[RMDB]
Chemical mapping of a 177-nucleotide RNA with DMS.

RNA sequence: GGGAACGACUCGAGUAGAGUCGAAAAAGGCUCGGCCCGACCUACCGACCACCGUGGUGGUGUCCGGUGGCAGCGCACCGGUCUUGGAAGGGCCGUCAUCGGUGCGUGAUGUGCUGCUGCAAGCUGAGCCACGUACUGAGUUCGCUCAGUACGUGGCAAAAGAAACAACAACAACAAC
Reactivity to DMS in 0.01 (KOAc 150mM, MgCl2 10mM, bicine 150mM(pH8.5), 24C), signal-to-noise 1, nucleotides 027 to 126: a110g000g000c040u020c010g060g010c020c060c010g000a300c000c000u020a100c180c040g000a070c060c060a010c050c110g000u010g040g000u000g010g000u000g000u000c030c000g010g010u000g030g000c080a120g000c030g000c010a020c020c000g010g060u000c020u000u000g030g000a120a300g000g010g000c010c000g020u000c040a050u000c060g000g000u010g000c000g020u040g000a090u000g000u010g010c020u000g040c060u010g000c090a110a120g000c080u000g010a190
Reactivities are given for positions 27 through 126. Conditions: 150 mM KOAc, 10 mM MgCl2 and 150 mM bicine (pH 8.5), 24 C.